[RMDB]
RNA sequence: GGGAACGACUCGAGUAGAGUCGAAAACGCUGGACAAAACGCGUCGCGUGGCAGGAAAACCCGCACUAUUUUCAGGCAUGGCAGAAAGGCGAAACCGGUUAUCCCAUUGUCGAUGCGGCGAUGCGCCGUACGUCCGCCAGUUCGCUGGCGGACGUACAAAAGAAACAACAACAACAAC
Reactivity to DMS in 0.01 (KOAc 150mM, MgCl2 10mM, bicine 150mM(pH8.5), 24C), signal-to-noise 1, nucleotides 027 to 126: c000g000c040u000g000g000a080c150a160a060a250a070c130g000c040g000u000c070g010c040g030u020g000g000c000a100g020g030a020a000a080a160c060c000c010g000c060a130c150u100a080u000u000u000u040c040a030g010g000c000a060u000g000g020c080a000g000a000a090a020g000g000c000g000a050a030a080c050c000g000g020u040u000a160u000c040c000c070a120u000u020g000u000c060g000a060u030g000c070g010g000c000g000a130u030g020c110g020c040c020
Reactivity to 2A3 in 0.01 (KOAc 150mM, MgCl2 10mM, bicine 150mM(pH8.5), 24C), signal-to-noise 2, nucleotides 027 to 126: c040g000c010u030g040g020a080c030a050a170a030a030c080g020c040g020u050c000g000c000g030u030g080g010c110a080g010g150a070a040a010a030c030c010c000g000c030a040c030u110a100u170u090u070u060c030a020g000g020c000a020u070g020g060c000a030g060a120a050a000g080g010c040g050a100a000a000c020c010g010g020u040u030a040u050c000c010c010a040u000u100g050u040c020g040a040u040g030c000g010g000c000g060a070u100g010c070g000c030c020
Chemical mapping of a 177-nucleotide RNA with DMS and 2A3. For 2A3, 2,007 sequencing reads were counted. Conditions: 150 mM KOAc, 10 mM MgCl2 and 150 mM bicine (pH 8.5), 24 C.